Description:
Source: RMDB library OK1LIB, as collected in RNAgym. Structure probing data (DMS and 2A3) for a 177-nucleotide construct.
[RMDB]
RNA sequence: GGGAACGACUCGAGUAGAGUCGAAAAUAUACAUCUGAAGUCGGCACAACACCAGACUCGCGGUGAGCGAUGCAGCGUAGCUUAUGCUACGCAGCUGCUGUGCGGAGGGCUAGCAAAAGCUAGCCUACAUUAGGGCUACUUUCGAGUAGCCCUAAUGAAAAGAAACAACAACAACAAC
Reactivity to DMS in 0.01 (KOAc 150mM, MgCl2 10mM, bicine 150mM(pH8.5), 24C), signal-to-noise 8, nucleotides 027 to 126: u030a100u030a100c150a090u000c030u010g000a100a090g020u030c020g010g020c030a020c030a050a070c050a050c090c090a100g000a130c170u010c040g000c050g010g030u030g000a240g010c020g000a040u020g030c020a050g020c000g000u000a010g000c000u010u020a120u050g010c000u000a000c000g020c000a000g020c020u000g010c020u000g010u000g010c020g000g010a070g000g010g000c000u000a000g000c000a120a080a110a150g020c000u000a000g010c000c010u000a000
Reactivity to 2A3 in 0.01 (KOAc 150mM, MgCl2 10mM, bicine 150mM(pH8.5), 24C), signal-to-noise 9, nucleotides 027 to 126: u130a000u030a030c070a120u080c060u080g070a120a020g090u050c020g050g020c030a010c000a100a080c010a040c030c030a030g080a160c030u010c050g050c030g040g040u150g050a020g020c030g100a140u140g010c030a010g000c000g000u010a000g000c020u280u150a140u300g000c000u000a000c000g000c000a000g000c010u030g000c000u020g010u050g000c040g020g040a070g000g020g000c000u010a000g000c020a130a210a210a000g000c000u000a000g000c000c000u010a020

Record summary:
Conditions: 150 mM KOAc, 10 mM MgCl2 and 150 mM bicine (pH 8.5), 24 C. For DMS the reverse transcriptase was MarathonRT.